[RMDB]
RNA sequence: GGGAACGACUCGAGUAGAGUCGAAAAGUACAGUGCACUCACUUAAUUGUUAUUGUGUAAUUACAGCCACCACAGAGAAAUUUAAAGGUCUGUACUAGUUUACUAGGUGUAGCAGAUGCUCCAUGAUAUGAAGCUGCAUGUUCGCAUGCAGCUUCAUAAAAGAAACAACAACAACAAC
Reactivity to 2A3 in 0.01 (KOAc 150mM, MgCl2 10mM, bicine 150mM(pH8.5), 24C), signal-to-noise 1, nucleotides 027 to 126: g060u070a100c010a070g040u040g010c080a010c000u030c030a010c010u000u010a120a000u270u070g080u090u130a070u060u000g030u040g000u000a000a000u120u110a090c080a070g000c000c000a030c000c000a000c030a000g080a000g120a140a060a080u170u290u280a030a160a090g000g020u000c000u000g000u040a030c000u000a010g190u020u000u180a080c030u000a080g000g010u040g010u030a010g150c000a030g070a030u080g010c000u060c080c000a060u120g080a040u000
Structure probing data (2A3) for a 177-nucleotide construct.
It was measured as part of the RMDB library RFM100.
The reactions ran in a buffer of 150 mM KOAc, 10 mM MgCl2 and 150 mM bicine (pH 8.5), at 24 C.